Chemical mapping of a 207-nucleotide RNA with DMS and 2A3. The 2A3 profile rests on 4,273 reads.
[RMDB]
RNA sequence: GGGAACGACUCGAGUAGAGUCGAAAAGGCUGGUGCCGGAGCCGAUACCGGAAUACGAGACCUCAUGUGCGGUCGAAUGCACUGAAGUACGAAAGUACGAAGAGGUCAGACCGAGGACCGAGACUCGAUAUGCUCGAUAGAUGGAGCUUUACAUCAAAUAAUACCUGGAUUUCGAUCCAGGUAUUAUAAAAGAAACAACAACAACAAC
Reactivity to DMS in 0.01 (KOAc 150mM, MgCl2 10mM, bicine 150mM(pH8.5), 24C), signal-to-noise 4, nucleotides 027 to 156: g020g040c030u000g040g030u000g040c010c040g010g010a120g020c060c050g030a180u010a080c020c010g030g000a130a080u000a120c060g020a200g000a040c010c000u000c000a220u000g020u000g010c030g010g020u000c150g000a130a120u010g010c030a020c020u010g000a100a170g030u000a010c000g020a150a090a230g000u000a020c000g000a120a130g000a080g020g020u000c010a130g010a070c020c020g000a170g030g010a110c070c020g000a170g010a110c010u020c030g020a100u000a060u000g000c010u010c020g030a120u000a090g000a130u010g010g000a080g010c040u000u000u000a080c070a100u000c040a040a110
Reactivity to 2A3 in 0.01 (KOAc 150mM, MgCl2 10mM, bicine 150mM(pH8.5), 24C), signal-to-noise 5, nucleotides 027 to 156: g010g020c020u040g030g080u050g030c010c010g010g000a010g040c020c090g070a050u090a110c020c000g030g060a080a070u140a070c050g020a030g010a110c010c010u010c020a050u070g020u020g020c020g000g030u110c090g030a070a040u150g000c010a000c030u050g060a100a010g010u000a000c000g030a160a020a020g000u000a000c020g010a060a040g010a000g000g010u010c010a010g010a010c010c010g030a040g000g050a010c020c050g020a020g030a060c030u020c020g040a060u030a060u200g020c010u010c030g050a060u060a120g070a030u060g040g000a020g020c000u050u050u050a070c050a040u100c040a060a180
For DMS the reverse transcriptase was MarathonRT. The RNA was probed in 150 mM KOAc, 10 mM MgCl2 and 150 mM bicine (pH 8.5) at 24 C. The DMS profile rests on 8,398 reads.